The record gives the reactivity of an RNA of 170 nucleotides to DMS and 2A3.
2A3 adducts were read by reverse transcription with SuperScript II with manganese.
In probing experiments dimethyl sulfate is read out at A N1 and C N3, which are open when not base-paired.
The DMS profile rests on 52,820 reads.
Reactivities are given for positions 27 through 129.

[RMDB]
RNA sequence: GGGAACGACUCGAGUAGAGUCGAAAAUGGCGUAAGGCGAGGCGAUAACUUCCAUAGUGUCUUAACAACAUUCAUUGACGCAGCACGAGGCCCCGCAGGUGUGGAGUCUGAUGUUGAGACCAAUGAACAAGGUCUCAGUUCGCUGAGACCAAAAGAAACAACAACAACAAC
Reactivity to DMS in 0.01 (KOAc 150mM, MgCl2 10mM, bicine 150mM(pH8.5), 24C), signal-to-noise 9, nucleotides 027 to 129: u040g010g010c100g040u030a030a050g030g040c050g020a060g000g020c000g040a060u040a120a090c090u000u000c070c060a080u000a070g010u040g000u000c020u020u040a060a090c140a000a070c090a040u010u030c120a090u000u030g000a030c060g040c220a160g000c070a050c050g020a090g000g000c010c000c010c000g000c080a080g000g000u050g050u000g020g020a300g010u000c060u050g000a060u000g010u000u000g040a040g020a070c000c000a050a040u050g000a040a050c220a080a100
Reactivity to 2A3 in 0.01 (KOAc 150mM, MgCl2 10mM, bicine 150mM(pH8.5), 24C), signal-to-noise 9, nucleotides 027 to 129: u110g070g000c030g030u030a040a030g020g000c030g020a020g020g000c020g030a050u050a160a060c040u070u020c020c000a040u050a060g120u130g020u060c000u050u100a070a040c050a010a000c000a060u040u110c020a030u030u150g000a000c030g010c060a010g010c010a020c060g070a070g050g030c010c010c000c020g050c030a090g000g150u120g010u040g060g050a030g010u000c020u030g050a080u050g020u020u010g010a020g010a030c010c020a020a080u080g030a040a040c080a130a070
The RNA was probed in 150 mM KOAc, 10 mM MgCl2 and 150 mM bicine (pH 8.5) at 24 C.